[RMDB]
RNA sequence: GGGAACGACUCGAGUAGAGUCGAAAAUCCGUUUACAAGUUAUCGUUAAGUCCAUGUCUGACUACGAUUCCGUAAACGGAAGCCAGUUUGCGUCAAGUCCGACAUGGACUCUUGGCAGAACUGAUCAGACGCCGUAAAUAUUCGUAUUUACGGCGUCAAAAGAAACAACAACAACAAC
Reactivity to 2A3 in 0.01 (KOAc 150mM, MgCl2 10mM, bicine 150mM(pH8.5), 24C), signal-to-noise 2, nucleotides 027 to 126: u000c010c000g020u110u120u080a130c080a140a150g000u030u030a080u110c070g020u060u110a070a000g010u000c030c000a050u100g050u000c050u070g000a020c000u050a060c050g040a030u070u000c020c010g030u030a010a010a000c020g030g020a010a010g050c030c000a040g000u050u030u030g030c040g040u030c070a050a030g010u000c000c010g080a120c190a120u080g000g000a000c000u020c030u020u010g000g000c020a020g040a030a020c020u030g050a110u110c100a050
Reactivity to DMS in 0.01 (KOAc 150mM, MgCl2 10mM, bicine 150mM(pH8.5), 24C), signal-to-noise 3, nucleotides 027 to 126: u000c000c030g020u030u010u000a050c060a130a100g000u020u000a040u020c060g020u000u000a040a040g000u000c010c040a050u000g010u000c070u020g010a010c020u000a070c070g000a050u000u000c210c050g000u000a020a010a040c010g000g020a050a080g030c160c080a100g000u000u000u010g020c050g000u000c060a100a040g010u010c030c070g010a080c110a070u010g010g000a020c020u000c040u010u000g010g000c050a240g010a010a010c010u000g010a080u010c130a140
Structure probing data (2A3 and DMS) for a 177-nucleotide construct. As a SHAPE reagent, 2A3 marks flexible, mostly unpaired nucleotides at the ribose 2'-OH. 2A3 adducts were read by reverse transcription with SuperScript II with manganese. The reactions ran in a buffer of 150 mM KOAc, 10 mM MgCl2 and 150 mM bicine (pH 8.5), at 24 C.